Chemical mapping of a 207-nucleotide RNA with 2A3.
RNA sequence: GGGAACGACUCGAGUAGAGUCGAAAAGAGCAACUUAGCAUUUUAGGCUCCCCGGUGCGUCUCGAACCGCGCCGGGCCAAACCCACAGGGGCUGGCGGUCCUGUGCGGUCAAAAUCUUUCCGCUGGAAUACCUAUCCCAGUUUCGACUGGGAUAGAAGCGUUACUAAGGAUUCGUCCUUAGUAACGCAAAAGAAACAACAACAACAAC
Reactivity to 2A3 in 0.01 (KOAc 150mM, MgCl2 10mM, bicine 150mM(pH8.5), 24C), signal-to-noise 1, nucleotides 027 to 156: g000a000g000c040a020a150c140u070u160a080g050c050a270u080u120u040u140a070g020g020c010u000c000c000c000c000g000g010u020g000c000g040u010c050u110c250g180a120a070c050c000g010c010g000c000c000g010g000g000c010c000a060a000a000c010c000c000a000c000a010g010g010g000g000c000u000g000g000c000g020g000u010c000c000u000g020u020g010c160g000g010u110c070a030a050a050a110u070c040u210u290u040c000c000g000c000u000g010g050a120a130u170a140c070c000u010a000u010c000c000c000a000g010u000u050u170c160g020a000c000u000g010g010g060a000u000a000g000a000a000
The RNA was probed in 150 mM KOAc, 10 mM MgCl2 and 150 mM bicine (pH 8.5) at 24 C. The data come from the RNA Mapping Database (RMDB), library M2RFPK. For 2A3 the reverse transcriptase was SuperScript II with manganese.